[RMDB]
RNA sequence: GGGAACGACUCGAGUAGAGUCGAAAAGGCGUAGCCGACAACAUGCCCAGGUAGCCCAGACCUUCAAGGCUACGGUGCGUUGCGACGCACGGUCUGAUUCUUCACAACGACGUUCACCGCGUCUUCUCAUGAAAAAGAGAUUCGUCUCUUUUUCAUGAAAAGAAACAACAACAACAAC
Reactivity to 2A3 in 0.01 (KOAc 150mM, MgCl2 10mM, bicine 150mM(pH8.5), 24C), signal-to-noise 9, nucleotides 027 to 126: g040g000c090g080u100a030g020c020c010g070a020c020a100a030c020a060u190g030c000c000c010a020g040g020u020a010g000c010c040c080a030g010a030c000c010u040u040c040a030a010g000g000c000u010a000c010g010g000u010g000c000g010u020u080g060c170g110a010c000g000c000a000c010g000g000u010c000u010g020a060u090u050c040u100u100c060a050c030a190a080c080g040a010c010g030u090u110c090a090c150c030g020c010g030u000c010u010u010c000u000
Reactivity to DMS in 0.01 (KOAc 150mM, MgCl2 10mM, bicine 150mM(pH8.5), 24C), signal-to-noise 6, nucleotides 027 to 126: g000g010c020g010u010a100g030c020c010g000a160c150a080a090c160a080u020g000c010c010c060a060g000g010u000a020g000c020c010c300a070g010a030c020c010u000u010c220a060a160g000g000c000u010a020c020g000g010u000g000c000g000u000u010g020c160g020a040c020g000c010a020c000g000g000u000c020u000g000a210u020u010c060u010u010c080a080c130a080a110c130g020a070c010g010u000u010c070a080c060c050g010c140g000u000c010u000u000c030u000